[RMDB]
RNA sequence: GGGAACGACUCGAGUAGAGUCGAAAAUUGAGACAGGGUCUUGCUUAGGCCGGAGAGCAGUGGUGCUAUCAUAGCUCAUUGUAACCUUGAGCUUCUGGGUUCAAAUGAUUCUCCUGCCUCAGCCUCCCCUUCCAAAUUGGUUCGCCAAUUUGGAAGGAAAAGAAACAACAACAACAAC
Reactivity to DMS in 0.01 (KOAc 150mM, MgCl2 10mM, bicine 150mM(pH8.5), 24C), signal-to-noise 3, nucleotides 027 to 126: u010u010g000a050g010a040c040a140g020g020g000u010c040u010u010g000c030u000u000a020g000g000c000c080g010g000a040g010a100g000c010a020g020u000g000g000u020g010c020u000a140u010c200a120u000a050g020c000u010c010a000u000u000g010u000a090a120c220c100u000u010g000a030g010c050u000u020c140u000g010g010g010u000u010c030a030a050a080u000g000a110u010u000c000u000c000c000u000g000c010c020u000c070a010g000c030c150u000c040c040
Reactivity to 2A3 in 0.01 (KOAc 150mM, MgCl2 10mM, bicine 150mM(pH8.5), 24C), signal-to-noise 3, nucleotides 027 to 126: u060u090g030a020g010a030c090a160g100g100g070u040c030u070u090g000c000u020u000a010g000g010c020c000g000g020a010g000a020g000c020a020g010u040g070g100u170g020c000u050a080u300c080a170u240a100g000c010u010c000a000u010u090g040u070a070a080c040c000u030u010g020a010g060c000u130u070c140u280g150g000g000u040u020c020a030a040a120u100g050a130u080u020c010u010c000c000u010g010c000c010u010c000a000g010c000c000u030c010c000